[RMDB]
This 177-nucleotide RNA was probed chemically with DMS.
Reactivities are given for positions 27 through 126.
DMS adducts were read by reverse transcription with MarathonRT.

RNA sequence: GGGAACGACUCGAGUAGAGUCGAAAAAUGGCGUAUUAGAUGUAAAAUUGGGCGUCCCUAAAGAGAUGGGCGGCGCAGGCGGGGCCGUGACAAAUCCAGAGCAGCUGUUUGCAGCGGGUUACUCUGCGUACGCACCACUAUUCGUAGUGGUGCGUACAAAAGAAACAACAACAACAAC
Reactivity to DMS in 0.01 (KOAc 150mM, MgCl2 10mM, bicine 150mM(pH8.5), 24C), signal-to-noise 1, nucleotides 027 to 126: a080u020g010g000c050g010u000a070u000u000a110g020a060u000g010u010a130a040a080a160u000u000g010g000g010c030g030u000c010c040c040u050a070a140a120g000a190g000a070u010g010g010g020c080g010g010c050g050c050a050g050g000c060g010g000g010g010c040c080g020u020g010a040c100a040a110a090u000c130c000a040g000a080g000c080a050g030c050u040g000u000u000u000g010c100a010g000c100g000g000g000u000u000a050c080u000c000u000g000c300
About this RNA:
It was measured as part of the RMDB library OK2TST. The DMS profile rests on 910 reads.